An RNA of 177 nucleotides, treated with DMS and 2A3 and read out base by base. As a SHAPE reagent, 2A3 marks flexible, mostly unpaired nucleotides at the ribose 2'-OH. The RNA was probed in 150 mM KOAc, 10 mM MgCl2 and 150 mM bicine (pH 8.5) at 24 C. DMS adducts were read by reverse transcription with MarathonRT.

RNA sequence: GGGAACGACUCGAGUAGAGUCGAAAAGAAAAAACUUUGUCAAGCCUAAUGAAACCAAAACUUACUUUUGGAAAGUGCAACAUCAUAUGGCACCCACUAAAGAUGGGUUUGACUGCAAAGCCUGGGCCUGUCAGAGAAAGUUCGCUUUCUCUGACAGAAAAGAAACAACAACAACAAC
Reactivity to DMS in 0.01 (KOAc 150mM, MgCl2 10mM, bicine 150mM(pH8.5), 24C), signal-to-noise 1, nucleotides 027 to 126: g010a040a030a110a080a090a110c050u010u000u010g000u000c020a040a040g000c000c000u000a080a080u000g030a140a060a050c020c020a020a000a000a040c140u000u000a100c140u000u010u010u000g040g000a070a130a080g010u020g000c020a100a190c110a060u000c300a040u050a210u000g000g050c010a070c010c030c050a150c090u000a150a050a090g010a130u000g020g000g010u000u000u000g010a060c040u000g000c120a040a040a040g000c020c000u000g010g000g020c090
Reactivity to 2A3 in 0.01 (KOAc 150mM, MgCl2 10mM, bicine 150mM(pH8.5), 24C), signal-to-noise 1, nucleotides 027 to 126: g000a090a180a000a000a000a000c080u150u080u100g000u010c000a000a010g000c010c010u100a180a070u210g000a090a000a040c030c040a030a000a050a090c060u150u150a090c020u080u070u070u020g010g000a180a000a090g010u010g040c050a050a050c010a060u170c020a070u080a030u290g100g000c000a000c000c030c000a020c020u080a110a080a000g140a070u130g020g020g000u020u000u020g000a050c000u000g000c080a140a040a060g000c010c020u020g010g010g060c000